RNA sequence: GGGAACGACUCGAGUAGAGUCGAAAACAAUAUGGAGAACAACCGUCAGUUCGGUUUCUUCCGUCUUGAUCCGCGUCUGAUCACCAUGAUCUCUUCGCCAAACGGUGAGCAGCGUCUGUUUGUGCCGAUACGCGAUAUUCUUCGGAAUAUCGCGUAUAAAAGAAACAACAACAACAAC
Reactivity to DMS in 0.01 (KOAc 150mM, MgCl2 10mM, bicine 150mM(pH8.5), 24C), signal-to-noise 2, nucleotides 027 to 126: c020a020a080u000a040u010g000g020a010g000a090a050c140a060a020c010c000g020u000c170a230g000u010u010c010g020g000u000u000u000c020u000u000c020c030g020u000c030u000u000g000a150u000c040c020g020c050g000u020c030u000g010a030u000c010a050c020c060a120u010g000a070u010c060u000c080u010u010c080g020c040c080a050a100a150c130g020g000u010g010a030g020c050a030g000c040g000u000c100u000g000u000u000u010g010u010g010c080c090g000
Reactivity to 2A3 in 0.01 (KOAc 150mM, MgCl2 10mM, bicine 150mM(pH8.5), 24C), signal-to-noise 2, nucleotides 027 to 126: c000a000a000u080a040u090g000g000a040g010a030a030c070a070a010c020c000g050u040c080a120g090u160u080c000g020g080u040u040u040c030u160u110c000c020g020u030c050u010u040g030a080u010c010c020g020c000g030u080c040u020g040a010u050c000a020c030c010a120u160g110a130u070c040u040c060u210u180c030g100c030c020a070a030a020c080g000g020u000g010a050g000c030a010g030c010g060u020c060u100g100u020u120u050g100u090g010c020c010g040
Chemical mapping of a 177-nucleotide RNA with DMS and 2A3. It was measured as part of the RMDB library OK2TST. For 2A3 the reverse transcriptase was SuperScript II with manganese. The DMS profile rests on 2,150 reads.